An RNA of 177 nucleotides, treated with 2A3 and DMS and read out base by base.
For 2A3 the reverse transcriptase was SuperScript II with manganese.
RNA sequence: GGGAACGACUCGAGUAGAGUCGAAAAGACGCCGCUUACCGAUCCGUCGCGAAUUCCCGACGCGUCGAAUUCGCGCAUCGCCGCCCGUUAUCCCCAUUGCGCGCGUUUAGCGCGAUCGAAACGGCGAGAUUUACUGACGAUUCGUCGUCAGUAAAUCAAAAGAAACAACAACAACAAC
Reactivity to 2A3 in 0.01 (KOAc 150mM, MgCl2 10mM, bicine 150mM(pH8.5), 24C), signal-to-noise 3, nucleotides 027 to 126: g070a020c030g010c010c010g020c070u050u080a070c090c000g040a040u050c030c010g030u020c000g040c010g030a030a060u050u010c000c000c020g010a030c030g010c010g020u040c010g000a050a050u100u040c010g000c010g000c010a020u050c020g040c030c020g030c030c040c000g120u130u140a230u300c050c030c020c010a040u080u190g000c010g000c010g000c000g000u030u020u060a020g000c010g000c020g000a010u000c020g020a020a030a030c010g020g000c010g000a020
Reactivity to DMS in 0.01 (KOAc 150mM, MgCl2 10mM, bicine 150mM(pH8.5), 24C), signal-to-noise 6, nucleotides 027 to 126: g010a190c040g030c010c030g020c050u000u010a100c190c030g000a020u010c090c040g010u010c010g020c020g000a060a100u000u000c010c020c010g020a190c040g000c040g010u000c020g000a060a120u010u000c030g020c010g010c050a060u000c030g010c040c010g010c020c210c080g000u000u010a130u010c010c010c010c090a180u000u000g010c040g020c130g010c030g020u000u010u020a120g010c010g020c020g000a020u010c050g000a050a090a060c010g000g010c020g000a080

For DMS the reverse transcriptase was MarathonRT. The reactions ran in a buffer of 150 mM KOAc, 10 mM MgCl2 and 150 mM bicine (pH 8.5), at 24 C. It was measured as part of the RMDB library OK2TRN. Reactivities are given for positions 27 through 126.